[RMDB]
RNA sequence: GGGAACGACUCGAGUAGAGUCGAAAAAACACCACGGCGGUCAUGAACAUGGCGGGGAUGGUGCAGACCCAGUGCAGCUUGCCCUCUUUGAUGAGGAAGGCGGCAGCGGCCCACAGCAUGAUGACGGCUAUACUUGGACGUUCGCGUCCAAGUAUAGAAAAGAAACAACAACAACAAC
Reactivity to DMS in 0.01 (KOAc 150mM, MgCl2 10mM, bicine 150mM(pH8.5), 24C), signal-to-noise 5, nucleotides 027 to 126: a090a040c050a090c030c010a050c090g010g010c050g030g010u000c020a030u000g010a100a090c160a080u000g000g010c030g020g000g020g000a090u000g000g000u000g020c060a070g000a150c020c010c010a090g030u000g010c020a030g010c020u000u000g010c120c010c010u000c000u000u000u010g010a120u010g000a030g010g000a180a030g000g010c040g000g000c010a040g020c070g020g000c010c010c030a060c100a060g000c040a060u010g000a060u010g020a100c080g010g000
Reactivity to 2A3 in 0.01 (KOAc 150mM, MgCl2 10mM, bicine 150mM(pH8.5), 24C), signal-to-noise 1, nucleotides 027 to 126: a000a010c090a060c090c000a050c040g140g070c080g100g000u020c000a040u050g080a120a090c070a100u040g070g000c070g030g040g020g030a130u030g000g010u030g000c040a000g030a130c020c000c000a010g050u030g010c020a010g000c000u070u130g060c040c030c010u050c070u120u160u160g250a300u140g000a020g050g030a020a030g010g010c010g010g000c020a010g010c030g010g000c000c000c000a050c010a010g030c010a030u120g040a040u080g030a080c040g020g000
The record gives the reactivity of an RNA of 177 nucleotides to DMS and 2A3. The RNA was probed in 150 mM KOAc, 10 mM MgCl2 and 150 mM bicine (pH 8.5) at 24 C. It was measured as part of the RMDB library OK2TST. High DMS reactivity at an A or C suggests that its Watson-Crick edge is free.